[RMDB]
RNA sequence: GGGAACGACUCGAGUAGAGUCGAAAAUUCGUUUACUCUCAGAAACAGAAACUUGCAAAAAAGACAUUGGCGCCGUUUAAUUUCCUAGUAUUCGUCAAACCCACCACUGAGGAUAAUGCUAUUAAGGUUAAGGAUCUGUACGAUAUGAUUCAUAACGAAAAACAGUGCAGUUCGCUGCACUGUUUUUAAAAGAAACAACAACAACAAC
Reactivity to DMS in 0.01 (KOAc 150mM, MgCl2 10mM, bicine 150mM(pH8.5), 24C), signal-to-noise 2, nucleotides 027 to 156: u000u000c050g010u000u000u000a100c090u000c040u010c050a050g010a140a160a160c030a140g060a140a070a110c020u000u000g030c080a000a060a130a100a080a070g000a130c030a080u000u010g020g010c030g080c120c030g000u000u020u000a070a120u000u000u000c020c030u010a160g000u020a090u010u000c060g040u000c010a040a130a190c000c000c000a050c080c020a100c100u000g020a080g000g000a070u010a060a080u010g000c030u020a100u000u010a080a070g000g000u000u000a060a100g030g000a040u000c040u010g040u000a130c110g010a170u000a060u000g010a110u010u010c020a190u000a060a100c110g000
Reactivity to 2A3 in 0.01 (KOAc 150mM, MgCl2 10mM, bicine 150mM(pH8.5), 24C), signal-to-noise 1, nucleotides 027 to 156: u010u000c050g000u090u080u150a030c000u000c050u040c040a030g090a040a090a010c010a060g110a100a050a030c090u100u190g000c190a090a040a020a000a170a100g040a020c000a070u050u000g000g020c040g060c000c000g010u000u000u180a080a000u030u100u000c010c010u000a000g000u010a060u110u090c000g040u040c080a010a000a180c030c010c010a010c000c030a010c030u090g000a040g000g000a010u020a060a020u100g020c040u030a020u260u050a090a030g090g000u040u010a030a070g050g000a000u040c050u050g040u080a020c020g030a030u040a060u220g020a000u020u000c010a020u020a120a000c050g010